The data come from the RNA Mapping Database (RMDB), library M2PK50. Chemical mapping of a 177-nucleotide RNA with DMS and 2A3. The RNA was probed in 150 mM KOAc, 10 mM MgCl2 and 150 mM bicine (pH 8.5) at 24 C. For DMS the reverse transcriptase was MarathonRT. The 2A3 profile rests on 4,841 reads.

RNA sequence: GGGAACGACUCGAGUAGAGUCGAAAACAGACCAAGUUCGCUUGGUCUGAAAGAAAGCGGAAAGCACCAGGGAGGGAAGGUGCGGGCCGCAUCCACCCAUAAAAAGUACGAUCUUCGGAUCGUACAACCAAAAGUAGCACUUCGGUGCUACUUUUGGAAAAGAAACAACAACAACAAC
Reactivity to DMS in 0.01 (KOAc 150mM, MgCl2 10mM, bicine 150mM(pH8.5), 24C), signal-to-noise 1, nucleotides 027 to 126: c010a000g000a000c000c000a000a000g000u000u000c200g000c000u020u000g000g000u000c000u000g000a010a150a040g000a040a110a100g010c060g000g010a010a030a130g000c010a010c000c010a180g010g030g010a150g000g060g030a140a190g010g010u010g000c020g000g000g000c060c000g040c000a060u000c140c100a080c000c000c020a120u090a060a020a030a110a100g030u000a000c000g000a000u000c000u000u020c180g030g000a020u000c000g000u000a000c010a010a040
Reactivity to 2A3 in 0.01 (KOAc 150mM, MgCl2 10mM, bicine 150mM(pH8.5), 24C), signal-to-noise 3, nucleotides 027 to 126: c000a010g000a000c000c010a000a000g010u020u050c130g020c150u020u000g000g000u010c000u000g000a000a000a010g040a020a080a000g000c010g000g000a080a030a010g010c010a010c000c010a060g080g090g060a180g020g060g030a050a080g020g000u010g000c000g000g030g010c010c000g000c000a000u010c010c020a030c020c010c020a050u260a070a100a010a000a000g000u000a000c010g010a010u000c000u030u090c240g070g000a000u000c000g000u010a000c000a000a020